[RMDB]
RNA sequence: GGGAACGACUCGAGUAGAGUCGAAAACGAGGCGCAGCAAUCGUUCGGCGGCAUCCGUGCCGGCGAGGUGGUCACCGUCGAGCGCACCGCGUACGUCGACCGGCUGAUCAAGAACAACCGCGUCGUCGUGGUCGAGGCUGACGACACCGGCGAGCCGCACAUUUGUAGGGUUCGCCCUACAAAUGUGAAAAGAAACAACAACAACAAC
Reactivity to DMS in 0.01 (KOAc 150mM, MgCl2 10mM, bicine 150mM(pH8.5), 24C), signal-to-noise 2, nucleotides 027 to 156: c040g030a130g040g000c020g000c050a130g050c060a050a130u000c050g040u010u010c010g030g010c000g020g000c050a060u000c120c130g050u000g030c010c010g010g020c030g030a090g000g120u000g000g020u000c020a060c050c000g040u010c030g010a080g050c010g010c080a100c010c020g000c030g030u000a080c000g050u000c020g020a030c050c020g000g020c030u010g020a150u000c070a100a110g020a180a180c010a040a040c020c030g000c040g040u000c010g010u000c020g030u010g050g020u000c050g040a090g010g050c040u010g000a090c030g010a110c020a080c000c000g000g020c010g020a120g010c010c030g000
Reactivity to 2A3 in 0.01 (KOAc 150mM, MgCl2 10mM, bicine 150mM(pH8.5), 24C), signal-to-noise 5, nucleotides 027 to 156: c070g030a050g060g040c040g010c080a050g010c040a060a160u100c050g050u160u100c030g030g020c010g020g000c040a050u060c060c120g110u120g010c000c010g050g020c030g020a060g000g040u040g000g020u080c080a040c120c020g040u040c020g030a010g000c050g010c030a040c030c040g020c030g040u150a020c020g010u010c000g000a070c050c010g020g000c030u050g050a170u180c140a190a090g070a120a140c020a030a030c000c010g010c050g020u010c000g010u000c010g000u020g030g040u080c060g010a030g090g000c030u030g010a050c010g010a010c000a010c040c000g000g020c020g010a020g020c010c010g040
The record gives the reactivity of an RNA of 207 nucleotides to DMS and 2A3. The RNA was probed in 150 mM KOAc, 10 mM MgCl2 and 150 mM bicine (pH 8.5) at 24 C. For DMS, 4,443 sequencing reads were counted.